[RMDB]
RNA sequence: GGGAACGACUCGAGUAGAGUCGAAAAGCUUUUCAGUUCGCUGAAAAGCAAAGAAAAGAUCGAAAGAUCAACGCAGAAACGGAGCGAAAUCCGUAACAAAAUAAACACCGAGGUUCGCCUCGGUGAACUUUUCGUUAUUGUUCGCAAUAACGAAAAGAAAAGAAACAACAACAACAAC
Reactivity to 2A3 in 0.01 (KOAc 150mM, MgCl2 10mM, bicine 150mM(pH8.5), 24C), signal-to-noise 3, nucleotides 027 to 126: g000c000u000u000u030u000c000a010g000u020u080c170g030c070u020g010a000a000a000a000g000c020a000a030a000g010a010a110a000a000g000a000u010c010g020a070a020a020g000a000u000c020a010a030c020g000c010a020g170a080a100a000c010g010g000a000g010c050g130a100a020a010u020c010c000g000u020a020a040c020a020a070a040a090u190a060a100a010c000a000c000c000g000a000g020g010u040u040c190g060c050c000u000c000g000g000u000g000a000a020
Reactivity to DMS in 0.01 (KOAc 150mM, MgCl2 10mM, bicine 150mM(pH8.5), 24C), signal-to-noise 3, nucleotides 027 to 126: g000c000u000u000u000u000c000a010g040u000u010c210g040c010u000g020a000a000a000a010g010c010a030a040a110g000a100a100a140a100g010a010u000c010g000a140a050a180g000a000u000c020a080a290c070g000c060a080g000a090a190a010c010g000g010a010g000c000g030a040a090a040u000c000c010g010u010a060a100c160a050a040a050a080u000a090a090a180c000a010c000c000g010a010g000g000u000u020c250g010c000c000u010c000g000g010u000g000a020a030